RNA sequence: GGGAACGACUCGAGUAGAGUCGAAAAGAUAUGGAUCUCCUCCCCACCGGGCUCGACGAAGAAGCUCGGAAACGAGCUUCAGAGAGCACGAGGGAGAUCCUAAGUCAAAGCUUGGUUCGCCAAGCAAGAUUAUUGCAAUGUUCGCAUUGCAAUAAUCAAAAGAAACAACAACAACAAC
Reactivity to 2A3 in 0.01 (KOAc 150mM, MgCl2 10mM, bicine 150mM(pH8.5), 24C), signal-to-noise 4, nucleotides 027 to 126: g050a100u270a200u300g000g000a010u000c000u010c010c010u070c040c030c010c000a030c010c010g000g020g020c010u040c010g300a300c040g010a170a100g010a000a000g020c000u000c000g000g020a020a010a000c010g000a000g000c000u020u010c020a000g000a000g000a000g000c010a010c000g010a030g000g000g000a000g000a000u000c000c000u020a080a010g130u110c130a180a050a030g000c010u010u000g010g000u090u220c270g050c100c000a000a000g010c000a000a010
Reactivity to DMS in 0.01 (KOAc 150mM, MgCl2 10mM, bicine 150mM(pH8.5), 24C), signal-to-noise 7, nucleotides 027 to 126: g010a110u010a200u010g010g010a020u000c000u000c000c000u000c130c030c010c050a300c130c010g000g010g010c000u000c000g000a210c160g000a090a090g000a010a020g000c000u000c000g000g000a010a050a100c000g000a020g010c000u000u000c000a030g000a120g000a010g020c000a020c000g000a130g010g000g000a020g000a000u000c000c000u000a030a110g010u010c130a100a100a130g010c000u010u000g000g010u010u010c240g010c000c000a010a000g010c000a030a040
Chemical mapping of a 177-nucleotide RNA with 2A3 and DMS. The 2A3 profile rests on 12,375 reads.